The record gives the reactivity of an RNA of 177 nucleotides to 2A3 and DMS. 2A3 adducts were read by reverse transcription with SuperScript II with manganese. Values cover nucleotides 27 to 126. The reactions ran in a buffer of 150 mM KOAc, 10 mM MgCl2 and 150 mM bicine (pH 8.5), at 24 C. High 2A3 reactivity points to a flexible backbone, as in loops and unpaired stretches. The 2A3 profile rests on 1,881 reads. Values are in units of 0.01, from 0 to 300, in steps of 10. For DMS the reverse transcriptase was MarathonRT. Source: RMDB library RFMREP, as collected in RNAgym.
RNA sequence: GGGAACGACUCGAGUAGAGUCGAAAAGGGUGUGUAGUGUUUGUGCUAAGGGAAAUCAUAACCUUAGGUAUGUUGUAUAAACAUAACGGCAAACUAGUUAUAGCUAAGGUGUUUCACUACGUUAUAAGUAAUAAUAGGGGUUCGCCCCUAUUAUUACAAAAGAAACAACAACAACAAC
Reactivity to 2A3 in 0.01 (KOAc 150mM, MgCl2 10mM, bicine 150mM(pH8.5), 24C), signal-to-noise 2, nucleotides 027 to 126: g040g000g020u040g010u020g000u050a030g020u000g040u060u050u040g050u030g040c010u010a010a010g020g030g020a050a090a030u160c020a040u030a110a050c010c000u020u020a040g000g000u040a020u040g040u000u020g060u050a120u180a190a030a000c020a020u050a050a010c010g040g000c030a040a070a040c050u040a080g080u080u080a100u030a060g020c040u040a030a070g040g020u040g030u030u110u020c010a030c060u100a040c040g010u120u000a100u010a160a080
Reactivity to DMS in 0.01 (KOAc 150mM, MgCl2 10mM, bicine 150mM(pH8.5), 24C), signal-to-noise 6, nucleotides 027 to 126: g000g010g020u000g020u000g010u000a050g010u010g010u000u010u010g030u000g010c030u010a020a030g000g010g000a080a110a140u000c300a080u010a090a180c010c010u000u000a010g020g010u000a010u000g000u000u000g000u000a130u010a090a030a020c030a010u010a030a090c120g000g010c050a040a030a080c080u000a070g010u000u000a100u010a080g000c020u000a060a090g010g020u000g010u000u000u010c020a060c040u000a100c090g000u000u000a070u000a080a150